Structure probing data (DMS and 2A3) for a 177-nucleotide construct.
[RMDB]
RNA sequence: GGGAACGACUCGAGUAGAGUCGAAAACCCAGGUGGCCUCAACCUUCAAGGCCACGUCACUCCCGUGAUGGUUGUCCCAAGGGCGAUUAGCGUUCGGUGGCUCGCCCGGUUGCCGCUCCCGCGGUGACCCUUAUGUUGAGUUCGCUCAACAUAAGGGAAAAGAAACAACAACAACAAC
Reactivity to DMS in 0.01 (KOAc 150mM, MgCl2 10mM, bicine 150mM(pH8.5), 24C), signal-to-noise 9, nucleotides 027 to 126: c000c000c010a040g010g000u000g000g000c000c010u020c040a040a030c020c020u000u000c280a070a200g000g010c000c000a000c000g010u000c010a040c030u030c170c200c260g010u000g010a020u000g010g010u000u000g010u020c020c020c030a130a100g010g000g000c010g000a090u020u010a110g010c040g020u010u020c130g000g010u010g010g010c090u000c010g000c010c010c000g000g010u000u000g000c010c010g000c020u020c140c170c230g010c030g010g000u000g000a070
Reactivity to 2A3 in 0.01 (KOAc 150mM, MgCl2 10mM, bicine 150mM(pH8.5), 24C), signal-to-noise 9, nucleotides 027 to 126: c000c000c000a010g030g020u010g010g000c010c010u160c080a040a030c010c000u030u020c020a020a000g000g000c000c000a000c000g010u010c010a010c020u140c010c070c090g020u010g010a020u020g020g010u010u030g060u070c040c040c020a090a130g010g020g000c020g050a090u110u190a060g040c030g100u150u150c110g120g130u120g070g010c020u010c010g000c000c000c000g000g000u040u060g000c000c000g010c010u140c060c030c050g000c000g000g000u010g030a020
The RNA was probed in 150 mM KOAc, 10 mM MgCl2 and 150 mM bicine (pH 8.5) at 24 C. Values are in units of 0.01, from 0 to 300, in steps of 10. For 2A3 the reverse transcriptase was SuperScript II with manganese.